[RMDB]
RNA sequence: GGGAACGACUCGAGUAGAGUCGAAAAUAACACUUCUUAACAGCUCUCCUAACAGCGUAACUAACAACUGUUUUCGUCCUUAAACCAACGAUAACGGCUGUUAGGCCAUGUUUUGUAAGGGCUGUUAUGAAUAAGACCUCUUCGGAGGUCUUAUUCAAAAAGAAACAACAACAACAAC
Reactivity to 2A3 in 0.01 (KOAc 150mM, MgCl2 10mM, bicine 150mM(pH8.5), 24C), signal-to-noise 7, nucleotides 027 to 126: u200a070a020c070a030c090u060u060c010u030u030a000a000c000a000g000c000u000c010u000c000c000u000a010a010c000a000g030c010g130u050a110a110c020u020a000a010c010a010a010c000u030g010u000u000u010u000c010g000u040c040c020u100u220a100a130a100c060c010a020a000c010g000a000u010a040a000c000g010g000c000u000g010u000u000a000g000g010c000c000a060u030g020u000u010u010u020g150u120a050a040g010g000g000c000u000g000u000u010a010
Reactivity to DMS in 0.01 (KOAc 150mM, MgCl2 10mM, bicine 150mM(pH8.5), 24C), signal-to-noise 4, nucleotides 027 to 126: u040a120a110c170a060c140u020u030c030u000u000a030a020c000a000g020c000u000c010u000c040c000u010a010a010c010a020g010c280g020u040a070a110c000u000a010a020c020a000a090c000u000g000u000u000u000u000c020g000u000c160c090u040u060a070a100a160c300c300a120a010c000g000a010u000a010a000c000g010g000c050u000g000u000u000a000g000g000c070c020a100u000g000u000u000u010u000g000u020a100a030g000g000g000c000u000g010u000u010a010